Chemical mapping of a 207-nucleotide RNA with DMS and 2A3. Values cover nucleotides 27 to 156. DMS adducts were read by reverse transcription with MarathonRT.
RNA sequence: GGGAACGACUCGAGUAGAGUCGAAAAUGUUGGCUUAAGUCACUUAGCCAGAUGGUAAAAAGUGGGUUAAAAUCUGAGAUAAAGAAUCUAAAGUAUGGACCUCUACUUUCAAAAGCAAAGUUGACUGCAAAUAGCAAAGUCUUAACAUCAGAUGAACUCGAUAUGAUACAUUCGUGUAUCAUAUCGAAAAAGAAACAACAACAACAAC
Reactivity to DMS in 0.01 (KOAc 150mM, MgCl2 10mM, bicine 150mM(pH8.5), 24C), signal-to-noise 2, nucleotides 027 to 156: u000g010u000u000g010g000c020u000u000a080a120g020u000c010a040c020u000u010a190g010c040c000a210g020a150u020g020g030u000a090a070a050a040a070g020u010g000g010g020u000u010a050a070a120a060u000c040u000g010a070g000a100u000a100a110a140g010a140a070u000c000u000a050a110a110g000u000a050u000g020g000a020c020c010u000c020u010a020c020u000u000u000c080a060a080a120a110g010c020a050a050a010g010u000u000g000a080c070u010g010c070a050a090a100u000a060g010c090a040a040a110g020u000c020u000u000a040a080c110a130u000c050a030g010a060u000g000a080a100c120
Reactivity to 2A3 in 0.01 (KOAc 150mM, MgCl2 10mM, bicine 150mM(pH8.5), 24C), signal-to-noise 4, nucleotides 027 to 156: u080g020u030u030g030g000c020u080u120a040a080g090u130c020a010c030u010u040a020g000c010c010a040g130a170u230g010g040u130a130a090a030a030a040g030u060g010g000g010u020u040a050a060a060a080u010c020u040g040a020g020a060u110a100a190a020g070a070a070u040c030u090a100a030a020g050u060a090u110g050g050a040c010c010u010c030u040a020c000u040u030u060c070a180a180a050a030g000c010a000a020a070g050u080u050g020a030c020u030g020c020a050a130a200u030a050g020c020a060a040a010g000u010c000u060u130a050a020c030a090u040c020a020g040a110u050g050a070a040c020